RNA sequence: GGGAACGACUCGAGUAGAGUCGAAAAGAAGUGGCAGGGACAUGCCCCAGAAGCUCGUUCUAGCAACAUAUGUUUGGCUAGUUCGAGCGAUUAGUCUCGAGGAGCGUCCUCUCGCCUCUUUACGAGAGAGGUGGACUGGUUUCGACCAGUCCACCUCAAAAGAAACAACAACAACAAC
Reactivity to 2A3 in 0.01 (KOAc 150mM, MgCl2 10mM, bicine 150mM(pH8.5), 24C), signal-to-noise 1, nucleotides 027 to 126: g010a000a000g030u020g000g100c000a050g000g000g000a000c040a050u120g010c000c000c000c000a000g030a120a000g000c000u000c000g000u030u030c000u000a000g000c000a020a030c000a050u130a130u260g290u200u080u160g260g030c000u000a000g000u000u000c000g000a000g000c000g000a000u000u020a020g100u000c010u000c030g010a090g080g000a070g000c010g000u000c000c000u130c080u070c030g030c040c000u020c000u180u000u040a080c130g030a000g000a000